Structure probing data (2A3 and DMS) for a 170-nucleotide construct. The 2A3 profile rests on 3,525 reads. The DMS profile rests on 5,086 reads.
RNA sequence: GGGAACGACUCGAGUAGAGUCGAAAAUUCGGGCCCUCUUCGCCGGGGGAGCCCCCUCUCCAUCCUUGUCUUUCUUUCCGAGAAUUCCUUUGAUGUUCCCUAGCCAGGGAUUGUCUUCCUCAAGUUUACCGGGUUCCGUUCGCGGAACCCAAAAGAAACAACAACAACAAC
Reactivity to 2A3 in 0.01 (KOAc 150mM, MgCl2 10mM, bicine 150mM(pH8.5), 24C), signal-to-noise 2, nucleotides 027 to 129: u100u020c030g000g050g000c000c010c000u040c050u110u110c020g070c030c000g020g020g000g010g020a000g000c000c020c040c000c000u010c010u020c010c000a090u030c030c000u010u070g020u070c000u000u020u010c000u020u020u000c020c000g000a010g080a120a070u080u050c030c000u080u090u130g060a070u020g010u040u060c000c000c010u010a000g040c030c040a040g000g000g030a030u010u050g020u000c000u000u000c000c000u050c040a060a050g040u090u000u000a040c030c020
Reactivity to DMS in 0.01 (KOAc 150mM, MgCl2 10mM, bicine 150mM(pH8.5), 24C), signal-to-noise 2, nucleotides 027 to 129: u020u040c110g050g000g030c030c010c030u000c000u070u030c100g000c030c070g050g040g020g000g010a030g050c020c040c070c070c030u020c030u000c030c100a100u050c040c060u000u010g040u030c130u000u000u030c010u000u010u060c020c010g050a170g030a300a100u000u000c000c000u040u080u060g010a100u010g010u030u030c000c040c000u020a150g070c070c130a000g040g000g000a110u030u040g000u060c050u040u040c060c000u010c140a080a080g030u000u000u000a050c110c080